[RMDB]
RNA sequence: GGGAACGACUCGAGUAGAGUCGAAAACAACUAUUACUUGUGUGGGAGGCUGGCAAGUCCAAACCACCACUCAAUCGUAAUUAUGUUUUUACUGGUUAUCAUAUAACCAAAAAUAGUAAAGUGCAGCGACCUACCACCUUCGGGUGGUAGAAAAGAAACAACAACAACAAC
Reactivity to 2A3 in 0.01 (KOAc 150mM, MgCl2 10mM, bicine 150mM(pH8.5), 24C), signal-to-noise 8, nucleotides 027 to 129: c020a010a080c040u070a000u050u030a000c000u000u000g010u000g010u010g030g040g030a270g010g000c020u010g010g000c070a180a090g050u040c000c010a020a040a050c000c000a010c000c000a000c000u010c000a040a050u120c070g000u000a000a010u030u070a060u090g080u000u040u000u030u060a090c070u040g010g010u010u020a040u050c110a030u100a030u090a200a040c000c040a030a040a050a040a020u180a020g060u080a030a090a050g030u050g070c030a020g020c000g020a020c010
Reactivity to DMS in 0.01 (KOAc 150mM, MgCl2 10mM, bicine 150mM(pH8.5), 24C), signal-to-noise 5, nucleotides 027 to 129: c030a040a090c190u030a040u000u000a000c000u060u030g020u010g020u000g000g000g020a200g070g020c190u000g010g060c060a110a170g030u010c030c020a000a070a150c060c020a140c000c000a020c010u020c050a040a050u070c000g020u030a000a090u000u020a050u000g000u020u000u020u020u030a000c130u050g030g000u010u040a050u060c230a060u000a300u000a070a000c020c000a000a030a010a050a070u080a090g010u090a020a050a080g010u000g030c030a020g020c070g030a100c070